RNA sequence: GGGAACGACUCGAGUAGAGUCGAAAAGGAGUUCUCGACCCAAAGGAAGCAGUUCUUCUUGCCGUUUCCUGUGAUGCUUUUGCCUUUGGACAAGAAGACACCAACAACGACCGUAUCACUGUUGAGACAUACGUGGACGUUUCGACGUCCACGUAUGAAAAGAAACAACAACAACAAC
Reactivity to 2A3 in 0.01 (KOAc 150mM, MgCl2 10mM, bicine 150mM(pH8.5), 24C), signal-to-noise 2, nucleotides 027 to 126: g040g000a060g040u050u030c010u010c030g060a020c000c020c060a020a110a020g020g000a020a020g030c040a020g020u050u070c000u050u020c000u060u050g050c020c010g070u010u050u030c000c000u050g050u080g010a040u130g000c000u060u200u150u190g070c000c000u110u100u050g030g030a060c020a040a040g070a040a010g020a040c040a030c020c010a000a080c000a030a020c030g020a040c040c050g030u040a030u060c020a020c110u060g070u050u030g050a050g010a000
Reactivity to DMS in 0.01 (KOAc 150mM, MgCl2 10mM, bicine 150mM(pH8.5), 24C), signal-to-noise 3, nucleotides 027 to 126: g000g020a110g030u000u000c020u000c040g020a200c050c060c040a060a050a070g000g020a030a060g020c080a070g000u010u000c060u000u000c060u000u010g030c050c050g020u000u010u000c010c010u010g020u000g020a100u010g010c040u010u000u000u000g000c020c040u000u000u000g030g000a130c090a060a100g010a060a050g000a110c060a110c050c000a040a070c130a020a100c070g010a080c050c050g000u010a140u000c060a100c120u010g000u000u000g010a070g000a200